[RMDB]
RNA sequence: GGGAACGACUCGAGUAGAGUCGAAAACGCAGCGCCAAGGGCAACAUUGUCCUGUUCCGGCCGGACGAGAACGCCGCGCGCAUGAUGGCCGGCGCGGAUCGGCUCAGCAUGCCGCCGCCGCCGCCGGAAGUGGAAUUGCUUUCGAGCAAUUCCACUUAAAAGAAACAACAACAACAAC
Reactivity to DMS in 0.01 (KOAc 150mM, MgCl2 10mM, bicine 150mM(pH8.5), 24C), signal-to-noise 2, nucleotides 027 to 126: c090g010c060a050g010c030g000c050c030a110a060g010g000g010c010a110a130c210a140u010u000g000u000c000c010u010g020u010u000c070c060g000g010c040c090g000g000a010c010g010a040g000a110a140c220g000c020c040g000c100g000c100g000c020a070u010g000a090u020g010g020c000c010g000g010c000g030c120g030g000a030u010c010g010g010c000u010c070a140g020c210a080u000g000c020c010g010c000c230g000c010c030g020c050c110g000c000c010g010g000
Reactivity to 2A3 in 0.01 (KOAc 150mM, MgCl2 10mM, bicine 150mM(pH8.5), 24C), signal-to-noise 1, nucleotides 027 to 126: c030g000c040a030g030c010g020c030c030a060a100g160g000g040c000a120a030c070a260u000u120g010u010c000c000u030g050u000u040c050c060g160g000c070c010g000g050a000c050g020a030g050a120a030c070g010c000c030g110c000g040c030g000c110a100u070g050a040u080g140g030c070c040g000g000c000g040c030g000g060a100u090c000g010g000c000u020c110a090g000c070a040u220g010c020c010g000c000c010g090c060c010g040c110c020g000c000c020g010g000